[RMDB]
RNA sequence: GGGAACGACUCGAGUAGAGUCGAAAAGAUAUGGAGCGAUACAUUCAUCGAUCUACCAGGUGGGUCGGAAACGAUAGUCUGGUAGGGAGAAUGUCGCUCCUAAGUCAAAGCCUUGUUCGCAAGGCAAGGUCAUAUUAGGCUUCGGCCUAAUAUGACCAAAAGAAACAACAACAACAAC
Reactivity to 2A3 in 0.01 (KOAc 150mM, MgCl2 10mM, bicine 150mM(pH8.5), 24C), signal-to-noise 2, nucleotides 027 to 126: g040a010u050a030u140g000g000a000g000c020g020a020u070a300c010a010u010u040c010a170u300c050g050a040u000c010u010a000c010c010a000g040g040u090g060g300g050u030c020g010g020a060a040a040c010g000a000u010a030g060u000c010u010g010g010u010a010g000g000g000a020g000a000a010u010g010u000c000g000c000u000c000c000u000a030a010g000u000c080a080a040a010g000c010c000u020u030g040u090u110c210g020c180a020a010g000g000c010a020a030
Reactivity to DMS in 0.01 (KOAc 150mM, MgCl2 10mM, bicine 150mM(pH8.5), 24C), signal-to-noise 2, nucleotides 027 to 126: g010a040u000a300u010g000g000a010g000c000g000a130u010a040c040a030u000u010c010a300u000c170g000a050u020c000u000a000c000c020a010g000g010u000g010g000g010u000c000g010g010a060a070a130c010g000a040u010a300g030u000c010u000g000g020u000a000g000g000g000a030g000a020a030u000g010u000c010g010c010u000c000c000u010a010a100g000u000c020a060a120a220g000c000c000u000u000g000u000u010c170g060c080a010a050g000g030c000a040a060
Structure probing data (2A3 and DMS) for a 177-nucleotide construct.
For 2A3, 4,660 sequencing reads were counted.
For DMS the reverse transcriptase was MarathonRT.